The record gives the reactivity of an RNA of 177 nucleotides to DMS and 2A3.
DMS (dimethyl sulfate) methylates the pairing face of unpaired adenines and cytosines.
2A3 is a SHAPE reagent: it acylates the 2'-hydroxyl of flexible nucleotides of all four kinds.
For 2A3, 28,398 sequencing reads were counted.
2A3 adducts were read by reverse transcription with SuperScript II with manganese.
For DMS the reverse transcriptase was MarathonRT.

[RMDB]
RNA sequence: GGGAACGACUCGAGUAGAGUCGAAAAGAUAUGGAGUACGUUGUAGACAUGCGCACUCGGAAACGAGUGGCAACAGCUACACCGUACUCCUAAGUCAAAGAUGACCCUAGUUCGCUAGGGUCAUCAACCAAUAGAUUAUCUUCGGAUAAUCUAUUGGAAAAGAAACAACAACAACAAC
Reactivity to DMS in 0.01 (KOAc 150mM, MgCl2 10mM, bicine 150mM(pH8.5), 24C), signal-to-noise 7, nucleotides 027 to 126: g010a050u000a300u010g010g010a020g020u000a000c000g000u000u000g000u000a010g010a050c080a170u000g000c060g020c010a010c000u000c000g010g000a090a080a180c000g010a010g030u000g010g000c000a020a050c210a110g000c000u000a010c000a020c020c000g010u000a000c000u000c000c000u000a000a040g010u000c040a100a110a120g000a010u000g000a020c000c000c000u010a010g010u000u020c220g010c000u000a000g000g010g000u000c000a000u000c000a050a140
Reactivity to 2A3 in 0.01 (KOAc 150mM, MgCl2 10mM, bicine 150mM(pH8.5), 24C), signal-to-noise 5, nucleotides 027 to 126: g050a010u070a050u140g000g000a000g010u010a010c010g010u010u000g000u020a020g030a110c060a170u080g010c300g110c060a020c000u000c010g000g030a080a100a020c020g000a000g000u010g000g020c010a030a020c060a030g050c010u000a000c000a000c000c000g000u000a000c000u010c000c000u000a010a000g000u000c010a020a050a090g010a000u000g000a000c000c000c000u000a010g010u020u070c300g000c140u000a000g000g000g000u000c000a000u000c000a000a000